[RMDB]
RNA sequence: GGGAACGACUCGAGUAGAGUCGAAAAAACCCGUUGAUUGAAAUUGAACCGUCCUGUUAUCUAAAGAUAGGCAGAAGAUACGAAAUGUGUGACAGCAUGGGAAGUAAAGGCAGACCGUGGUUCCCUUAAAAUCGUCGAAUCUUCGGAUUCGACGAAAGAUGGUUGUAUAGUUCGCUAUACAACCAUCAAAAGAAACAACAACAACAAC
Reactivity to DMS in 0.01 (KOAc 150mM, MgCl2 10mM, bicine 150mM(pH8.5), 24C), signal-to-noise 1, nucleotides 027 to 156: a120a120c010c000c000g020u000u000g000a110u000u020g010a030a140a100u000u010g010a120a060c030c070g000u000c030c010u000g020u000u000a090u010c100u010a030a080a130g020a060u000a010g040g040c000a060g000a150a010g020a110u030a190c080g000a040a080a090u000g040u000g010u000g020a110c050a090g000c040a060u010g000g020g000a060a080g020u020a030a090a080g000g040c020a030g020a060c030c060g020u000g010g000u000u020c020c010c010u020u000a010a060a110a210u010c030g080u000c020g020a020a020u010c000u010u000c300g020g020a030u020u010c000g020a000c010g010a010a010a050
Reactivity to 2A3 in 0.01 (KOAc 150mM, MgCl2 10mM, bicine 150mM(pH8.5), 24C), signal-to-noise 1, nucleotides 027 to 156: a000a020c000c000c000g010u020u040g060a300u030u100g050a060a090a140u070u120g020a080a030c060c010g030u000c000c000u020g000u090u040a180u180c100u220a220a070a060g030a040u150a140g140g000c050a020g020a120a010g100a060u100a080c050g020a020a080a020u100g060u000g020u070g080a080c100a020g030c020a030u030g000g000g030a040a000g000u070a130a040a000g020g000c010a010g050a020c050c000g000u020g000g020u020u040c000c000c000u000u030a060a080a010a090u030c000g010u000c010g000a000a000u000c020u070u010c030g060g000a000u000u000c000g000a000c000g000a000a000a000